[RMDB]
Chemical mapping of a 177-nucleotide RNA with 2A3 and DMS. DMS adducts were read by reverse transcription with MarathonRT. The reactions ran in a buffer of 150 mM KOAc, 10 mM MgCl2 and 150 mM bicine (pH 8.5), at 24 C. Values are in units of 0.01, from 0 to 300, in steps of 10.

RNA sequence: GGGAACGACUCGAGUAGAGUCGAAAACCAGAGAAGUUCGCUUCUCUGGAAAACUAAAACGAAUGCAAAGCCCGUUACGGCAAAACGAGCGAAAAGAAUAAGAAAGAAGUUGGUUCGCCAACUUCAACUCUAUACAGAAGUUCGCUUCUGUAUAGAGAAAAGAAACAACAACAACAAC
Reactivity to 2A3 in 0.01 (KOAc 150mM, MgCl2 10mM, bicine 150mM(pH8.5), 24C), signal-to-noise 3, nucleotides 027 to 126: c010c000a000g000a000g000a010a010g010u070u100c140g020c100u000u000c000u020c000u000g000g000a020a070a020a040c020u090a000a000a100a140c060g110a140a020u200g080c070a110a060a050g040c040c000c000g060u090u050a100c150g050g050c050a010a250a040a060c020g030a030g010c040g020a010a150a050a020g080a070a110u220a140a020g070a100a100a030g010a010a010g000u000u000g000g040u010u070c120g030c030c000a000a000c000u010u000c000a000a000
Reactivity to DMS in 0.01 (KOAc 150mM, MgCl2 10mM, bicine 150mM(pH8.5), 24C), signal-to-noise 2, nucleotides 027 to 126: c000c000a020g000a010g000a000a020g010u000u020c200g020c000u000u000c000u000c010u000g000g010a020a020a070a140c090u000a040a040a070a110c100g040a100a090u000g020c070a110a130a300g000c030c030c020g000u000u000a080c170g020g020c100a090a060a060a040c050g000a050g000c000g000a070a050a110a140g000a090a110u010a070a110g000a060a140a100g010a020a000g010u000u010g000g010u000u010c200g020c020c000a000a030c000u000u000c010a010a080

The data come from the RNA Mapping Database (RMDB), library M2PK50.